RNA sequence: GGGAACGACUCGAGUAGAGUCGAAAAGAUAUGGAAUGGAGACUCGCGAUAAGCAUUUGGUCGGAAACGACCAUAUGCUUUUGACGCGAGUCCCAUUCCUAAGUCAAAACACUACUUCGGUAGUGAACGAAAUAUCAUACUUCGGUAUGAUAUUUCGAAAAGAAACAACAACAACAAC
Reactivity to 2A3 in 0.01 (KOAc 150mM, MgCl2 10mM, bicine 150mM(pH8.5), 24C), signal-to-noise 4, nucleotides 027 to 126: g010a000u030a010u090g000g020a010a000u020g020g000a190g010a230c010u010c020g010c080g170a100u090a300a010g000c010a010u030u010u030g000g000u000c020g000g030a020a030a010c010g000a000c000c000a000u000a000u020g000c000u070u010u040u090g110a080c190g000c000g000a000g000u010c000c000c000a000u000u000c000c000u000a010a000g000u000c010a000a010a060a060c010a000c000u020a000c000u050u080c300g170g000u000a000g010u020g080a090a020
Reactivity to DMS in 0.01 (KOAc 150mM, MgCl2 10mM, bicine 150mM(pH8.5), 24C), signal-to-noise 5, nucleotides 027 to 126: g010a020u000a300u010g000g000a010a000u010g000g000a200g020a010c000u000c000g030c000g020a170u010a020a030g000c000a000u000u000u000g010g010u000c000g000g000a060a090a170c000g010a000c000c000a000u000a000u000g010c010u000u000u000u000g010a180c150g010c000g000a010g020u000c000c010c010a000u000u000c000c000u000a000a090g000u000c030a110a100a140a200c010a010c000u000a010c000u000u010c240g030g010u000a000g000u000g000a060a160
Description:
An RNA of 177 nucleotides, treated with 2A3 and DMS and read out base by base. DMS adducts were read by reverse transcription with MarathonRT. High 2A3 reactivity points to a flexible backbone, as in loops and unpaired stretches. 2A3 adducts were read by reverse transcription with SuperScript II with manganese. For DMS, 10,341 sequencing reads were counted. The RNA was probed in 150 mM KOAc, 10 mM MgCl2 and 150 mM bicine (pH 8.5) at 24 C.